RNA sequence: GGGAACGACUCGAGUAGAGUCGAAAAAGGGAAAUGCUUGUUUUCCUCUCUCUAAGUAUAAAUGCUCAUUCACACCUUUCCUGACUUUUUGAGAGGUGGCAAAAUGCCCAAGAUUGAUUGCCAGUUACUUGUGUUACCUGAAUGAGGCCCUUGUGAGCAAGGCAACAAAAUUCGUUUUGUUGCCUUGAAAAGAAACAACAACAACAAC
Reactivity to DMS in 0.01 (KOAc 150mM, MgCl2 10mM, bicine 150mM(pH8.5), 24C), signal-to-noise 2, nucleotides 027 to 156: a040g000g010g010a050a090a050u000g020c130u000u000g000u000u000u000u000c010c010u000c010u000c000u000c040u000a050a090g030u000a120u000a020a070a080u010g030c030u000c030a090u010u000c050a120c050a060c030c020u000u000u020c040c040u000g010a120c070u010u000u010u000u020g000a100g010a030g010g030u000g000g040c060a050a080a070a110u000g010c000c040c030a070a110g010a170u010u010g000a090u000u010g010c010c020a130g000u000u000a050c060u010u000g010u000g020u000u000a070c060c020u010g010a050a070u010g000a090g010g010c040c010c020u000u000g010u000g000a150g000
Reactivity to 2A3 in 0.01 (KOAc 150mM, MgCl2 10mM, bicine 150mM(pH8.5), 24C), signal-to-noise 4, nucleotides 027 to 156: a000g080g000g000a040a060a020u110g050c050u130u080g040u060u080u080u040c010c000u020c010u000c000u000c000u010a030a060g040u050a120u080a270a130a080u160g000c010u030c030a060u080u080c060a070c010a010c080c020u040u020u040c010c010u030g120a130c040u100u080u040u100u110g020a020g000a010g000g020u010g000g000c020a020a040a040a150u150g050c020c050c010a030a060g080a120u050u160g000a050u040u110g070c020c010a020g030u090u090a040c010u050u050g000u020g010u080u040a060c000c020u020g010a050a040u060g010a050g010g040c020c000c000u030u040g060u090g030a020g020
This 207-nucleotide RNA was probed chemically with DMS and 2A3.
Values are in units of 0.01, from 0 to 300, in steps of 10.
2A3 adducts were read by reverse transcription with SuperScript II with manganese.
Source: RMDB library OK3TST, as collected in RNAgym.
For DMS, 6,590 sequencing reads were counted.